[RMDB]
RNA sequence: GGGAACGACUCGAGUAGAGUCGAAAAAAGCUUCAACGCCUUUUUUUCCUAUCUUCUUUAGCACCGGGCUAGGGAGUAAGCCCGUGGAACCUUAGUUUUGUUCCCUCGGGACUUACUUGUGGUUCCUGUGGUGCACUCCUGACCCUGCUGCUUUGAACUAACCAUUAGCCUUCGGGCUAAUGGUUAGAAAAGAAACAACAACAACAAC
Reactivity to 2A3 in 0.01 (KOAc 150mM, MgCl2 10mM, bicine 150mM(pH8.5), 24C), signal-to-noise 1, nucleotides 027 to 156: a000a000g060c090u300u270c210a200a080c100g030c030c030u010u030u030u070u000u030u000c010c000u090a250u100c070u140u000c030u050u110u080a000g010c000a010c010c010g020g050g070c000u090a040g040g050g000a010g030u030a060a000g000c010c030c030g030u010g000g010a000a000c000c010u040u000a030g020u030u130u080u270g070u210u050c000c000c040u140c160g040g000g020a030c000u000u000a000c000u040u110g140u080g100g000u020u020c010c020u030g120u210g050g010u110g000c000a000c000u020c000c000u030g070a100c100c000c000u000g000c020u000g000c000u080u120u120g090a090a050